The data come from the RNA Mapping Database (RMDB), library TTRDES.
This 177-nucleotide RNA was probed chemically with 2A3 and DMS.
For 2A3, 4,509 sequencing reads were counted.
As a SHAPE reagent, 2A3 marks flexible, mostly unpaired nucleotides at the ribose 2'-OH.
2A3 adducts were read by reverse transcription with SuperScript II with manganese.
RNA sequence: GGGAACGACUCGAGUAGAGUCGAAAAGAUAUGGAAUAGUCCUGUGGGAGAGCGCAAAUCGGAAACGAUUUGAUGCUCAUCGAUCACAGGAGCUAUUCCUAAGUCAAAGUGAUCGUUCGCGAUCACAGGCGUUACAUAAGUUCGCUUAUGUAACGCCAAAAGAAACAACAACAACAAC
Reactivity to 2A3 in 0.01 (KOAc 150mM, MgCl2 10mM, bicine 150mM(pH8.5), 24C), signal-to-noise 2, nucleotides 027 to 126: g030a010u110a030u170g010g010a020a010u010a020g050u020c020c010u020g000u020g010g020g000a110g010a000g020c030g000c000a030a010a020u000c010g000g030a050a040a060c030g010a000u000u020u030g170a190u150g020c000u000c000a080u150c020g070a050u070c010a000c000a030g020g000a000g010c000u000a000u000u020c000c000u010a050a020g040u050c060a140a090a120g020u000g000a000u020c010g030u100u100c300g020c060g120a000u010c010a000c010a000
Reactivity to DMS in 0.01 (KOAc 150mM, MgCl2 10mM, bicine 150mM(pH8.5), 24C), signal-to-noise 2, nucleotides 027 to 126: g000a040u000a300u000g000g000a010a000u000a020g000u000c000c020u020g030u000g020g010g000a050g020a010g000c000g000c000a030a000a000u020c000g000g010a090a120a190c000g010a040u010u010u000g000a040u010g000c000u010c000a170u020c140g000a080u000c000a000c000a000g000g000a060g010c000u000a000u010u000c010c000u000a000a050g000u000c040a100a090a200g030u000g000a020u000c000g020u020u000c300g030c000g030a020u000c020a000c020a080